Conditions: 150 mM KOAc, 10 mM MgCl2 and 150 mM bicine (pH 8.5), 24 C.
This 177-nucleotide RNA was probed chemically with 2A3.
2A3 adducts were read by reverse transcription with SuperScript II with manganese.
[RMDB]
RNA sequence: GGGAACGACUCGAGUAGAGUCGAAAAUUCCUGAAGUAGUAUUUGAAAGUACACUUAGGAUUACUAGAACUCUGUCAACUCAGUACUGCCGGUUCGGUAGUUGUGAGUAUGCACAAGAGGGUGUUUGCCGUGUUUUCAAGUUCGCUUGAAAACACGGAAAAGAAACAACAACAACAAC
Reactivity to 2A3 in 0.01 (KOAc 150mM, MgCl2 10mM, bicine 150mM(pH8.5), 24C), signal-to-noise 1, nucleotides 027 to 126: u080u000c000c010u000g060a040a000g030u300a000g000u000a030u060u010u200g250a240a110a000g020u000a030c010a010c000u020u000a010g120g000a020u140u070a100c030u040a080g150a220a080c010u010c010u000g040u020c000a000a000c000u020c000a030g010u030a010c000u020g060c000c000g190g140u230u220c070g010g000u000a010g000u000u070g150u000g070a000g030u010a200u030g060c060a020c010a100a000g000a000g100g010g060u120g020u010u100u010g000